Background
Structure probing data (2A3) for a 207-nucleotide construct. The reactions ran in a buffer of 150 mM KOAc, 10 mM MgCl2 and 150 mM bicine (pH 8.5), at 24 C.
[RMDB]
RNA sequence: GGGAACGACUCGAGUAGAGUCGAAAAUUCAGAGACUACGAGUGUAAUAAGAGCAUCCGUCGACAAAAGGAUCACCCUAAGAUGAUCAUCUCGUGGCUAUUGAGAACGAAUUAAAUCAGAUGGUUCUAUUUCUCAAUCUUUCUGACUUGCUCCUACGCUCUCAUUUCUCCUUCGGGAGAAAUGAGAGAAAAGAAACAACAACAACAAC
Reactivity to 2A3 in 0.01 (KOAc 150mM, MgCl2 10mM, bicine 150mM(pH8.5), 24C), signal-to-noise 1, nucleotides 027 to 156: u050u020c010a000g010a000g110a160c000u020a040c000g000a030g000u020g000u100a000a150u080a210a000g050a050g000c030a020u000c090c070g180u130c040g150a070c120a010a080a000a000g030g010a080u100c040a110c020c000c040u040a030a090g030a060u050g020a020u090c000a010u000c020u000c010g000u010g000g000c040u040a000u010u010g000a010g000a000a000c060g030a030a020u080u060a070a160a110u250c110a060g060a300u130g120g000u030u000c020u020a200u030u060u000c000u000c010a040a050u010c060u030u230u070c000u010g010a010c010u010u090g030c040u050c020c010u010a020c060g020